[RMDB]
RNA sequence: GGGAACGACUCGAGUAGAGUCGAAAAUUGCGGCAACGCGCAUGGCAUUUUGCCUCAUGUGGGAACCAUGCUAUUGCGGCAGAUUACGUCAUCCGGUUACUCAAUCGUCACCCGCGCGAUGCGACAAUAAAUGCAGGUGCUUCGGCACCUGCAUUUAAAAAGAAACAACAACAACAAC
Reactivity to 2A3 in 0.01 (KOAc 150mM, MgCl2 10mM, bicine 150mM(pH8.5), 24C), signal-to-noise 1, nucleotides 027 to 126: u070u020g020c000g070g020c020a000a020c040g110c020g000c090a000u000g040g000c090a130u070u030u030u290g110c040c020u120c110a260u270g080u300g000g020g000a000a020c000c000a020u020g000c000u040a020u040u000g000c020g100g010c020a010g060a170u210u140a010c080g020u010c040a110u070c030c060g000g010u060u050a010c020u010c030a020a010u060c010g000u000c020a090c000c000c060g000c020g020c000g030a060u140g000c040g040a010c070a010a090
Reactivity to DMS in 0.01 (KOAc 150mM, MgCl2 10mM, bicine 150mM(pH8.5), 24C), signal-to-noise 1, nucleotides 027 to 126: u000u000g000c000g000g000c030a040a020c080g000c200g000c020a030u010g000g010c270a220u000u000u000u020g000c020c050u000c140a100u000g010u010g000g010g020a140a150c070c000a000u020g020c060u010a220u000u010g030c050g000g030c010a000g010a060u000u030a160c090g020u000c000a090u010c120c120g000g010u000u010a090c030u000c030a050a090u010c020g020u010c050a110c020c000c000g030c080g010c120g010a060u000g000c000g050a060c070a120a120
This 177-nucleotide RNA was probed chemically with 2A3 and DMS. The RNA was probed in 150 mM KOAc, 10 mM MgCl2 and 150 mM bicine (pH 8.5) at 24 C. For 2A3 the reverse transcriptase was SuperScript II with manganese. The data come from the RNA Mapping Database (RMDB), library OK2TST.